[RMDB]
RNA sequence: GGGAACGACUCGAGUAGAGUCGAAAAAGCUGGGCCUGACAUCUACGAACUCGACCGACAACCGACCCGACGAUCAGGAGGUUUCCCCGGCAAGUCGCGUGCCAUGUCAAUCCGCGGGUCUUGACUAGUACGUCCGUAGGUUCGCCUACGGACGUACAAAAGAAACAACAACAACAAC
Reactivity to DMS in 0.01 (KOAc 150mM, MgCl2 10mM, bicine 150mM(pH8.5), 24C), signal-to-noise 1, nucleotides 027 to 126: a030g060c030u040g000g030g010c070c000u000g060a040c040a030u000c080u010a120c150g020a070a050c120u000c060g000a020c040c040g090a100c160a120a070c080c040g000a150c000c040c000g000a070c060g000a040u000c190a140g000g050a120g000g000u000u020u010c070c010c010c060g000g000c090a010a010g010u000c020g000c010g000u010g000c060c000a060u060g000u010c010a010a060u000c020c020g000c090g000g030g000u020c000u010u000g010a000c020u030a140
Reactivity to 2A3 in 0.01 (KOAc 150mM, MgCl2 10mM, bicine 150mM(pH8.5), 24C), signal-to-noise 2, nucleotides 027 to 126: a000g030c040u040g000g000g050c010c030u040g010a080c000a130u060c020u090a060c080g040a150a090c050u010c040g040a050c000c080g080a040c020a030a050c000c030g040a040c020c000c020g020a060c040g080a110u090c010a050g050g000a000g020g000u000u050u050c020c000c000c000g040g040c050a080a010g110u080c020g000c000g080u060g020c040c010a060u120g050u130c050a060a060u000c000c020g000c000g030g000g010u020c000u050u060g040a030c040u010a030
This 177-nucleotide RNA was probed chemically with DMS and 2A3. 2A3 adducts were read by reverse transcription with SuperScript II with manganese. Values are in units of 0.01, from 0 to 300, in steps of 10. For 2A3, 1,190 sequencing reads were counted. For DMS the reverse transcriptase was MarathonRT.